[RMDB]
RNA sequence: GGGAACGACUCGAGUAGAGUCGAAAAGCAUUACCAUGGCUGUCAAAGUACUGUUCAUAGAUAAGAUCAAAUUGAUCCUUUUCGCGAAUAUCACGCUGAAAGUCAACAUUGAAGGCAAAGAGAUCAAAAUUACGUGCUGAUUCGUCAGCACGUAAUUAAAAGAAACAACAACAACAAC
Reactivity to 2A3 in 0.01 (KOAc 150mM, MgCl2 10mM, bicine 150mM(pH8.5), 24C), signal-to-noise 2, nucleotides 027 to 126: g020c000a020u080u040a050c020c000a010u000g020g000c020u030g000u110c060a110a040a090g010u020a050c020u020g030u040u050c000a030u050a100g020a040u090a110a040g010a020u040c050a040a130a110u090u110g010a030u060c000c000u040u060u040u060c030g040c020g050a060a010u100a050u140c070a020c020g040c050u080g040a010a050a030g040u000c020a010a050c020a130u020u210g030a040a030g050g020c040a060a080a000g060a010g010a020u000c050a070a050
Reactivity to DMS in 0.01 (KOAc 150mM, MgCl2 10mM, bicine 150mM(pH8.5), 24C), signal-to-noise 4, nucleotides 027 to 126: g010c080a050u000u000a060c050c010a090u000g000g010c000u030g000u000c040a080a190a210g020u010a030c070u010g010u010u000c010a070u010a140g020a100u010a070a090g000a050u000c010a080a150a200u000u000g010a050u010c030c020u000u020u000u010c140g020c070g010a090a060u000a080u000c100a060c110g020c100u000g020a020a030a060g010u000c030a040a060c170a100u000u010g000a080a100g000g010c070a050a060a070g000a170g010a050u000c070a030a040